The record gives the reactivity of an RNA of 177 nucleotides to 2A3.
For 2A3 the reverse transcriptase was SuperScript II with manganese.
Source: RMDB library OK1LIB, as collected in RNAgym.
Reactivities are rounded to 0.1 and cut off at 0 and 3.
The RNA was probed in 150 mM KOAc, 10 mM MgCl2 and 150 mM bicine (pH 8.5) at 24 C.
[RMDB]
RNA sequence: GGGAACGACUCGAGUAGAGUCGAAAACACCGCCGCGGAGCACACCGAUGCGGUGGUAGCUGUGGUGUCCAAGAUCGACGUGCACCGCGGCUGGCGUGACGUGCUUACCAGUAACCGCGACAGGCUGCUGCAGAGCCACGUUCGCGUGGCUCUGCAGAAAAGAAACAACAACAACAAC
Reactivity to 2A3 in 0.01 (KOAc 150mM, MgCl2 10mM, bicine 150mM(pH8.5), 24C), signal-to-noise 1, nucleotides 027 to 126: c030a000c000c000g000c000c010g070c000g000g000a000g060c070a030c000a000c080c040g040a000u130g120c000g110g000u030g040g000u000a000g020c030u070g110u200g050g000u120g070u210c080c000a070a050g000a130u190c080g120a030c050g140u110g000c020a000c130c000g000c040g000g000c030u070g000g060c060g070u030g000a000c000g030u030g080c020u080u030a050c000c000a020g000u000a000a000c000c030g030c030g040a040c000a010g000g080c000u080g060